An RNA of 207 nucleotides, treated with 2A3 and DMS and read out base by base. For 2A3, 525 sequencing reads were counted. The reactions ran in a buffer of 150 mM KOAc, 10 mM MgCl2 and 150 mM bicine (pH 8.5), at 24 C. For DMS the reverse transcriptase was MarathonRT. 2A3 adducts were read by reverse transcription with SuperScript II with manganese. As a SHAPE reagent, 2A3 marks flexible, mostly unpaired nucleotides at the ribose 2'-OH.
[RMDB]
RNA sequence: GGGAACGACUCGAGUAGAGUCGAAAACGAAACCUACAUCUUGUCAGAUUGAUCCGUGUUGACUCAAUUUGUGCGCCACCAGGAGAAGUUACCCAGGACAAGAUUCUGGAUAUGUGUCAGCAAGUUGCCACUAAGUUGGAAUGUGGCUGAAUACAGCCAAGAUUGCGCAGUUCGCUGCGCAAUCUUGAAAAGAAACAACAACAACAAC
Reactivity to 2A3 in 0.01 (KOAc 150mM, MgCl2 10mM, bicine 150mM(pH8.5), 24C), signal-to-noise 1, nucleotides 027 to 156: c010g040a110a000a010c040c000u050a070c010a060u020c020u030u110g020u020c000a060g000a180u080u110g060a020u110c030c120g130u000g080u180u090g030a060c070u040c070a020a150u030u020u090g080u010g000c070g010c020c000a050c020c020a020g000g060a040g030a010a060g060u030u050a130c030c010c010a050g110g010a010c020a000a060g020a220u070u020c070u090g040g000a060u060a030u290g020u030g140u130c010a000g000c040a090a090g070u090u090g010c010c000a000c000u070a090a040g130u120u000g080g040a060a050u110g020u020g090g000c000u040g010a020a010u090a110c020a000g020c030
Reactivity to DMS in 0.01 (KOAc 150mM, MgCl2 10mM, bicine 150mM(pH8.5), 24C), signal-to-noise 1, nucleotides 027 to 156: c050g010a100a040a150c000c010u000a100c020a080u010c050u020u000g000u010c000a210g000a110u020u010g000a050u000c000c000g000u010g020u000u000g000a060c090u010c140a080a110u000u000u010g000u000g060c040g040c110c000a070c060c030a140g000g010a040g000a130a090g000u000u000a040c050c010c000a130g000g000a080c000a040a210g010a300u000u000c020u000g000g000a030u010a060u000g020u000g000u000c020a090g000c030a050a090g040u000u000g000c030c010a090c130u030a050a300g020u000u000g040g020a070a070u010g020u000g020g040c010u020g000a050a200u000a080c080a110g030c000